[RMDB]
RNA sequence: GGGAACGACUCGAGUAGAGUCGAAAAUUUGGUGAUGGGGAUAGAGAUGCCGUAGGUGUCCACUUCCUGGAAGGCGUCGGUACCGAUCAUCGAGGCCGGUACCUGGCCGGUGAUGCAGACCAGCGGAGCUCGUAUGGUGAUUCGUCACCAUACGAGCAAAAGAAACAACAACAACAAC
Reactivity to DMS in 0.01 (KOAc 150mM, MgCl2 10mM, bicine 150mM(pH8.5), 24C), signal-to-noise 4, nucleotides 027 to 126: u000u020u020g000g010u000g010a090u020g000g020g010g030a110u020a100g000a180g010a050u010g010c030c040g020u030a090g040g030u010g000u010c020c050a060c070u000u010c010c020u000g000g010a140a110g000g000c010g000u000c100g000g020u000a030c010c020g000a020u010c010a130u040c120g010a120g000g010c050c010g010g000u000a030c030c010u000g000g030c000c020g010g000u000g000a090u020g000c130a060g000a140c020c030a070g000c040g000g000a150
Reactivity to 2A3 in 0.01 (KOAc 150mM, MgCl2 10mM, bicine 150mM(pH8.5), 24C), signal-to-noise 3, nucleotides 027 to 126: u080u030u060g010g010u040g040a100u120g040g000g020g010a050u050a160g160a010g010a060u040g030c000c020g060u080a020g000g060u050g020u040c050c000a010c060u070u050c020c000u040g050g060a060a090g030g010c000g030u080c090g020g010u010a000c000c010g030a020u040c020a010u080c040g050a170g060g000c000c000g020g050u050a060c000c020u050g080g000c000c020g000g030u010g000a060u100g050c020a020g020a070c010c000a000g080c010g040g040a090

An RNA of 177 nucleotides, treated with DMS and 2A3 and read out base by base. The DMS profile rests on 8,247 reads. DMS adducts were read by reverse transcription with MarathonRT. The 2A3 profile rests on 2,139 reads.